[RMDB]
RNA sequence: GGGAACGACUCGAGUAGAGUCGAAAAGAGGGCAGCACUGCCUGUUGCUGGCAUUUCCGGAUACUUCAAGUUAGGUCAGUAAUAUUCGGCAGAGGGAACUGUACCAGGUGUAUCCUUUUUGUAAGUCUGGAAAAUGGGGAUUCGUCCCCAUUUUCCAAAAAGAAACAACAACAACAAC
Reactivity to DMS in 0.01 (KOAc 150mM, MgCl2 10mM, bicine 150mM(pH8.5), 24C), signal-to-noise 1, nucleotides 027 to 126: g000a160g010g010g000c040a080g000c090a170c020u010g010c020c010u020g000u010u000g000c000u000g000g020c020a020u000u000u010c070c200g010g020a130u010a110c150u030u000c110a100a100g000u000u000a030g000g040u010c010a010g010u000a040a010u000a100u000u030c190g000g000c030a030g010a090g010g010g010a110a100c070u000g020u030a140c060c080a190g000g030u000g020u030a120u000c000c010u000u000u000u000u000g010u010a080a130g000u010c160